[RMDB]
RNA sequence: GGGAACGACUCGAGUAGAGUCGAAAAAAUUAAUUAAAAAGAAACGUUUACUUCUCAAAACGUUAUCGUUAAGCUUAGCUGGUUUAACAACUACUCUAGCUAUCGUUGUUUGACCGACUUUAACUGAUACCCACUAUCAAUUCGUUGAUAGUGGGUAAAAAGAAACAACAACAACAAC
Reactivity to DMS in 0.01 (KOAc 150mM, MgCl2 10mM, bicine 150mM(pH8.5), 24C), signal-to-noise 2, nucleotides 027 to 126: a080a070u050u040a070a140u010u010a030a040a110a050a160g000a110a050a010c010g000u000u000u000a050c120u000u000c010u020c020a100a000a000a000c010g020u000u000a030u000c080g010u000u000a030a050g030c160u010u000a010g010c080u020g030g010u000u010u000a020a020c050a040a050c050u010a070c120u010c130u010a120g010c160u010a050u010c140g000u000u000g010u000u010u010g000a030c020c020g000a030c040u000u000u010a030a060c020u010g000a180